[RMDB]
Notes
Conditions: 150 mM KOAc, 10 mM MgCl2 and 150 mM bicine (pH 8.5), 24 C. This 177-nucleotide RNA was probed chemically with 2A3 and DMS. For DMS the reverse transcriptase was MarathonRT. For 2A3 the reverse transcriptase was SuperScript II with manganese. Source: RMDB library M2PK50, as collected in RNAgym. The 2A3 profile rests on 2,218 reads.
RNA sequence: GGGAACGACUCGAGUAGAGUCGAAAAAGUCUACUUUUCGAAGUAGACUGUGCUCCCACUUGAUCGAGGUCUCACCGUGUCAUUGCCCACCACACUCGGGCGUAAUAGAUUGGUUCGCCAAUCUAAAUCGAUGCAUAAUCUUCGGAUUAUGCAUCGAAAAAGAAACAACAACAACAAC
Reactivity to 2A3 in 0.01 (KOAc 150mM, MgCl2 10mM, bicine 150mM(pH8.5), 24C), signal-to-noise 2, nucleotides 027 to 126: a000g000u000c000u010a010c020u030u050u030u120c200g070a000a000g010u000a010g000a000c000u000g010u060g050c010u030c030c030c000a010c030u060u110g070a070u110c050g030a020g050g070u030c030u030c040a080c060c000g040u040g060u090c040a090u050u240g040c020c000c000a030c020c010a120c000a000c060u070c040g040g000g000c000g000u000a050a040u010a020g010a000u010u010g040g000u000u050c160g070c030c000a000a000u000c000u000a030a000a030
Reactivity to DMS in 0.01 (KOAc 150mM, MgCl2 10mM, bicine 150mM(pH8.5), 24C), signal-to-noise 4, nucleotides 027 to 126: a020g010u000c000u000a000c000u000u000u000u010c160g000a000a000g020u000a000g010a000c000u010g010u010g020c200u000c010c000c010a160c180u010u000g010a040u010c060g010a090g010g000u000c060u010c050a100c040c040g010u010g010u000c040a090u000u010g000c020c010c030a130c120c110a090c120a080c110u010c080g000g000g010c040g000u010a070a120u010a010g000a030u010u000g000g000u000u010c270g010c000c000a010a010u000c000u000a010a080a110